[RMDB]
RNA sequence: GGGAACGACUCGAGUAGAGUCGAAAAACGCUGAGUGCUCUCAGGCCGAUCCGGCCGUGAUGGCGCGGAUCGAUCGAUCUCGGCCGUACGAUCAUGAGCGCGGAUCAUAGCGCGUACUGGCGCGUAGGGAACUCCGUUAGUUCGCUAACGGAGUUCCAAAAGAAACAACAACAACAAC
Reactivity to DMS in 0.01 (KOAc 150mM, MgCl2 10mM, bicine 150mM(pH8.5), 24C), signal-to-noise 2, nucleotides 027 to 126: a090c130g020c020u000g020a070g000u010g000c190u020c010u010c100a160g010g000c130c030g000a000u010c030c010g010g010c010c010g000u010g000a050u000g010g010c020g020c020g020g010a040u010c000g020a020u010c070g030a100u000c100u020c000g050g020c000c010g010u000a090c010g000a020u000c030a040u000g010a230g040c010g010c040g000g000a040u000c010a110u030a200g000c010g000c030g050u000a050c170u000g000g000c030g010c040g030u000a130g020
Reactivity to 2A3 in 0.01 (KOAc 150mM, MgCl2 10mM, bicine 150mM(pH8.5), 24C), signal-to-noise 2, nucleotides 027 to 126: a000c080g000c060u020g000a000g060u170g100c050u020c000u020c140a020g080g000c010c030g000a000u000c010c000g060g000c030c010g080u090g060a110u180g070g030c140g000c020g120g010a140u080c000g010a020u040c110g050a030u050c010u000c030g000g000c020c020g000u050a010c040g040a040u020c020a010u050g090a090g140c160g000c030g040g000a010u010c030a080u120a000g040c020g000c000g040u040a130c110u050g100g050c020g010c010g070u070a130g040
Conditions: 150 mM KOAc, 10 mM MgCl2 and 150 mM bicine (pH 8.5), 24 C. Chemical mapping of a 177-nucleotide RNA with DMS and 2A3. It was measured as part of the RMDB library OK2TRN. The DMS profile rests on 1,394 reads. DMS adducts were read by reverse transcription with MarathonRT.